About this RNA:
Chemical mapping of a 177-nucleotide RNA with DMS. Source: RMDB library TTRDEL, as collected in RNAgym. The DMS profile rests on 1,319 reads.
RNA sequence: GGGAACGACUCGAGUAGAGUCGAAAAGAUAUGGAUCGAAAUACCCUUGGAUUUACAGUAUAUCGGAAACGAUAUAUGGGUUGUCAGGGUUCUUCGAUCCUAAGUCAAAGCCUUCUUCGGAAGGCAAGACUGAAUUGAACUUCGGUUCAAUUCAGUCAAAAGAAACAACAACAACAAC
Reactivity to DMS in 0.01 (KOAc 150mM, MgCl2 10mM, bicine 150mM(pH8.5), 24C), signal-to-noise 2, nucleotides 027 to 126: g010a030u000a300u000g000g000a010u010c000g010a000a050a050u000a050c030c000c020u010u020g010g030a010u010u000u000a000c030a300g010u000a000u000a000u020c000g030g000a110a100a180c020g000a000u030a020u000a000u000g000g000g000u000u000g000u000c010a020g000g000g000u010u010c190u000u000c000g000a010u000c000c000u000a000a020g010u000c030a100a100a190g010c000c010u000u000c000u000u020c180g030g020a010a000g000g010c000a030a010

Overview:
For DMS the reverse transcriptase was MarathonRT.